Chemical mapping of a 207-nucleotide RNA with DMS and 2A3. For 2A3 the reverse transcriptase was SuperScript II with manganese. The DMS profile rests on 15,340 reads. The 2A3 profile rests on 4,020 reads. DMS adducts were read by reverse transcription with MarathonRT.

[RMDB]
RNA sequence: GGGAACGACUCGAGUAGAGUCGAAAAGUGUGAGUGAGUCAAGCCUUCUUGGAUGUUCUGGUUGGCUAUCCCAGGAAUCAUAUCUACUCCUGUUUCCCUUCCUCAUUUGUAGGUCUACAGGCAAGUAGUGUCUUGGUGUCCAAAAUCUAAUCAGCUAAUGCCAUAAUUAGUUCGCUAAUUAUGGCAUAAAAGAAACAACAACAACAAC
Reactivity to DMS in 0.01 (KOAc 150mM, MgCl2 10mM, bicine 150mM(pH8.5), 24C), signal-to-noise 5, nucleotides 027 to 156: g030u010g030u010g000a090g020u000g010a110g050u010c050a050a150g010c050c030u010u010c020u010u010g030g020a100u000g020u000u000c020u010g020g020u000u000g010g010c040u010a120u000c040c010c010a120g000g010a210a090u000c060a090u010a100u010c020u000a030c010u000c000c020u000g000u000u010u010c100c000c030u000u000c040c070u000c100a210u000u000u010g020u000a020g020g010u000c040u000a050c040a060g020g010c040a100a100g010u000a040g010u000g000u000c070u000u010g010g000u000g000u000c030c040a040a040a070a090u010c050u000a050a120u000c060a090g020c110u000a120
Reactivity to 2A3 in 0.01 (KOAc 150mM, MgCl2 10mM, bicine 150mM(pH8.5), 24C), signal-to-noise 5, nucleotides 027 to 156: g040u040g010u020g050a040g020u080g010a010g020u070c050a080a010g000c020c010u050u050c030u080u090g060g020a060u060g060u120u080c030u040g020g020u040u050g040g000c020u040a070u110c000c000c010a020g030g040a030a020u050c050a040u050a050u100c030u020a040c020u050c040c000u000g020u040u040u030c060c010c010u050u040c050c030u140c080a200u100u080u260g080u160a020g010g010u010c030u050a010c020a010g010g010c030a100a000g020u020a000g020u030g040u030c050u020u040g010g010u050g070u050c010c020a060a060a040a020u070c050u080a030a050u060c070a020g000c040u040a150